Structure probing data (DMS and 2A3) for a 207-nucleotide construct.
Values cover nucleotides 27 to 156.

RNA sequence: GGGAACGACUCGAGUAGAGUCGAAAAAAGGACUCGCUCGCGCUCCUGUCGGGUUCACUCAUUCAUAAGGGUUUAAUUUCCAAGAGAAAUCCCUUGAUAGGAGAGGCGAAGGAAAAGGGUCAGAAGAAUGUGGAGCGGGUCAAGGAGCUCAUGAAGGCAAAAUACAGUUCUUCGGAACUGUAUUUUGAAAAGAAACAACAACAACAAC
Reactivity to DMS in 0.01 (KOAc 150mM, MgCl2 10mM, bicine 150mM(pH8.5), 24C), signal-to-noise 1, nucleotides 027 to 156: a110a070g010g030a030c010u000c030g050c040u000c010g030c020g030c030u010c000c010u000g020u000c060g000g000g010u000u010c060a140c060u000c030a190u000u010c060a280u000a050a060g000g020g000u000u010u010a090a110u000u000u000c020c080a220a260g000a270g010a040a130a070u000c030c030c030u000u010g000a040u000a060g000g010a050g010a140g000g010c030g030a050a140g040g000a050a040a110a050g040g010g030u000c050a060g000a040a120g030a030a060u000g020u000g020g000a060g080c060g030g030g040u010c030a070a060g000g000a090g010c090u000c010a080u010g000a160a090g020g000
Reactivity to 2A3 in 0.01 (KOAc 150mM, MgCl2 10mM, bicine 150mM(pH8.5), 24C), signal-to-noise 2, nucleotides 027 to 156: a000a020g070g010a010c010u000c020g020c000u000c000g010c020g020c000u000c000c010u000g050u050c030g030g000g080u100u120c050a040c050u040c020a070u300u040c070a080u130a270a060g040g000g030u150u190u180a130a060u020u130u040c030c060a150a030g080a000g040a050a100a050u170c000c000c000u000u160g060a070u040a050g030g000a000g000a030g070g000c060g030a030a050g010g010a050a040a000a010g070g000g020u070c010a010g010a080a030g030a040a080u200g030u090g050g040a030g080c000g010g000g010u000c010a000a000g080g000a040g040c010u020c130a080u070g080a100a040g030g000